[RMDB]
RNA sequence: GGGAACGACUCGAGUAGAGUCGAAAACAAGGGGCAUGCGUUGCGCGCUGCGAUCAACACGCCCAUCCAGGGGAGCGCGGCGGAUGUGGCGACUGCAGCCAUGCUCUCCAUCGCGCGCUGCCCAGAGGUGAGUAUGAUGAUUCGUCAUCAUACUCACAAAAGAAACAACAACAACAAC
Reactivity to DMS in 0.01 (KOAc 150mM, MgCl2 10mM, bicine 150mM(pH8.5), 24C), signal-to-noise 7, nucleotides 027 to 126: c170a150a140g000g000g010g020c010a030u000g020c090g010u000u010g020c040g000c140g020c050u010g010c040g000a090u020c120a080a080c130a140c070g000c010c020c010a060u010c070c090a160g010g010g000g010a040g000c010g010c050g020g020c090g000g010a030u000g010u010g010g010c040g000a080c130u000g020c070a100g000c030c060a020u000g010c060u000c010u000c040c040a090u000c070g010c020g010c010g010c020u000g000c000c000c010a120g000a090g010
Reactivity to 2A3 in 0.01 (KOAc 150mM, MgCl2 10mM, bicine 150mM(pH8.5), 24C), signal-to-noise 9, nucleotides 027 to 126: c060a090a120g030g000g000g000c020a030u110g020c080g110u080u180g030c030g000c020g030c090u120g010c030g060a090u170c030a010a060c040a020c090g040c010c000c000a020u060c040c030a090g010g000g000g050a030g030c040g000c020g110g100c040g030g030a060u070g060u160g040g000c040g060a070c120u230g020c040a010g000c010c000a020u040g000c010u000c000u000c030c000a070u090c030g030c000g000c010g010c020u050g060c000c010c010a070g030a040g080